[RMDB]
RNA sequence: GGGAACGACUCGAGUAGAGUCGAAAAUCUGUGACGUGAGACUGGUUGAAGCACUUCACGUCUUCCUCCGGGAAGACUCUCCUUCCCCUUCCCCCCCGUCACUGAUGUACUCUGUGUGCACAUCAUCCGCAUAAAACGUCUUCGGACGUUUUAUGCGAAAAGAAACAACAACAACAAC
Reactivity to DMS in 0.01 (KOAc 150mM, MgCl2 10mM, bicine 150mM(pH8.5), 24C), signal-to-noise 1, nucleotides 027 to 126: u000c100u010g020u000g010a040c050g030u020g000a050g030a120c040u010g000g020u000u010g010a150a080g020c070a080c060u000u000c020a040c070g000u000c010u000u000c010c000u010c260c170g010g020g000a020a020g010a030c010u000c090u010c030c030u000u020c000c020c000c060u000u040c010c000c010c000c000c010c010g010u000c070a050c100u000g010a050u000g010u000a030c070u010c090u000g010u010g000u000g010c010a030c010a010u000c050a080u000c110